[RMDB]
RNA sequence: GGGAACGACUCGAGUAGAGUCGAAAAGGGGUCGUCGCCGAACGCGUGAGCUUUUGACGAGCUGAAGCCUCCACGGCUCGAUAAGCUCACGAACUACGUUCGUGCGACGACGGAGGCACCCAAAAGACUCUUUACCUCUUCGGAGGUAAAGAGUCAAUCUAGUGAUGCAGUUCGCUGCAUCACUAGAAAAAGAAACAACAACAACAAC
Reactivity to 2A3 in 0.01 (KOAc 150mM, MgCl2 10mM, bicine 150mM(pH8.5), 24C), signal-to-noise 2, nucleotides 027 to 156: g030g000g010g000u010c000g000u000c000g000c010c000g000a030a000c010g010c000g080u020g000a000g030c050u100u250u220u270g170a100c050g000a010g000c000u010g020a110a000g010c000c000u040c000c000a020c000g040g050c030u000c000g050a090u070a270a000g000c000u010c000a000c000g000a010a030c080u150a040c010g000u010u030c040g060u180g000c010g000a000c000g000a000c000g000g000a000g000g000c000a020c000c020c020a020a130a000a030g010a000c000u000c010u010u000u010a030c000c010u060c050u120u150c300g090g010a000g000g000u000a000a000a000g000a000g000u000c000a000a010